The data come from the RNA Mapping Database (RMDB), library M2PK50.
Chemical mapping of a 177-nucleotide RNA with 2A3 and DMS.
For DMS, 2,256 sequencing reads were counted.
DMS adducts were read by reverse transcription with MarathonRT.
[RMDB]
RNA sequence: GGGAACGACUCGAGUAGAGUCGAAAAGGGUAGAUCUUCGGAUCUACCCAAAAGCAGCAACCAACGAAGGAAGUGCUAGCAUAAGCGUGCAGGCUAGCACUAAAAGGUUCCGCUUCGGCGGAACCAAGUAAAAUGAUGACUUCGGUCAUCAUUUUACAAAAGAAACAACAACAACAAC
Reactivity to 2A3 in 0.01 (KOAc 150mM, MgCl2 10mM, bicine 150mM(pH8.5), 24C), signal-to-noise 2, nucleotides 027 to 126: g040g000g010u000a010g000a000u000c010u050u050c240g030g000a000u000c000u000a000c000c000c000a000a000a000a020g020c020a000g010c010a050a040c020c000a030a040c070g150a080a040g140g100a080a030g000u000g000c010u000a000g000c020a050u040a230a110g090c100g100u120g010c070a010g150g000c010u000a000g010c000a000c000u000a000a010a010a030g000g000u000u000c000c010g020c030u040u080c210g070g000c000g000g000a000a000c000c000a010a000
Reactivity to DMS in 0.01 (KOAc 150mM, MgCl2 10mM, bicine 150mM(pH8.5), 24C), signal-to-noise 2, nucleotides 027 to 126: g010g000g020u000a000g000a000u000c010u000u020c140g000g000a010u010c010u000a000c020c000c010a010a000a040a040g030c100a060g010c060a090a130c060c020a060a060c190g010a090a100g000g010a170a040g020u000g000c000u000a000g000c000a080u000a100a040g010c050g010u000g030c050a120g000g000c010u010a000g010c000a000c000u000a010a030a100a100g000g010u010u010c000c000g000c000u010u010c230g020g020c000g000g000a000a000c020c010a020a020